[RMDB]
RNA sequence: GGGAACGACUCGAGUAGAGUCGAAAACGUGUACUCCCCCAUGCUCCGGGCCAGCAUCAGUUCUGGCGGUUGGUUAAAGGCCUCUGGAAUGUAUCGUCCUCCGGGACGUCUUAUAGCCAGGGGCGCAAAACAAUAUAGGAUUCGUCCUAUAUUGUUUAAAAGAAACAACAACAACAAC
Reactivity to 2A3 in 0.01 (KOAc 150mM, MgCl2 10mM, bicine 150mM(pH8.5), 24C), signal-to-noise 9, nucleotides 027 to 126: c040g050u070g030u140a080c030u060c000c000c000c000c010a040u080g030c010u020c030c020g070g060g010c020c000a010g020c010a140u150c040a100g050u180u050c010u010g020g010c030g020g000u040u050g020g010u020u110a100a070a050g120g000c000c000u000c000u000g000g020a080a070u060g010u040a050u080c010g010u000c000c000u010c050c090g060g000g000a000c000g000u000c010u030u100a100u050a030g040c000c000a000g000g000g000g000c000g000c000a000
Reactivity to DMS in 0.01 (KOAc 150mM, MgCl2 10mM, bicine 150mM(pH8.5), 24C), signal-to-noise 9, nucleotides 027 to 126: c100g010u010g010u010a100c070u000c020c010c020c030c040a090u010g000c050u000c030c030g010g010g010c010c010a030g010c080a200u030c170a110g010u020u020c010u000g000g010c020g010g010u010u000g000g010u010u010a070a100a120g010g010c000c000u000c000u000g000g000a060a050u030g010u000a030u010c010g000u000c000c000u000c240c170g010g010g010a010c000g010u010c030u000u000a020u010a090g000c000c000a010g000g000g000g010c000g010c100a040